[RMDB]
RNA sequence: GGGAACGACUCGAGUAGAGUCGAAAACAGGAAAGUUGUAAAAUUAAUACAAAGAAUUUCAAGCCAUCCUUUACCCUAAGUCUUAAAAUGUUAAUUUUAUCACAUUUGCUUUAAUCUUCUUUCUCUCUCUUUCCAUCUCUAUCUAAUUUUUAUUUCACACUACUCCCUUAUUCGUAAGGGAGUAGUGAAAAGAAACAACAACAACAAC
Reactivity to 2A3 in 0.01 (KOAc 150mM, MgCl2 10mM, bicine 150mM(pH8.5), 24C), signal-to-noise 2, nucleotides 027 to 156: c010a000g000g040a080a070a030g030u060u040g010u060a030a030a030a130u100u160a080a070u110a110c030a060a150a000g030a060a090u070u140u150c010a010a030g000c010c020a060u030c040c010u070u110u130a100c000c030c030u030a050a030g030u050c010u080u120a050a120a030a050u060g020u000u000a090a170u080u110u110u220a060u150c010a000c010a030u060u040u100g000c010u020u110u190a070a040u060c080u110u000c000u000u100u010c020u010c000u030c030u040c000u020u050u020c040c010a040u030c020u020c030u100a090u050c020u120a150a220u120u090u030u020u130a120u080u070u060c000a000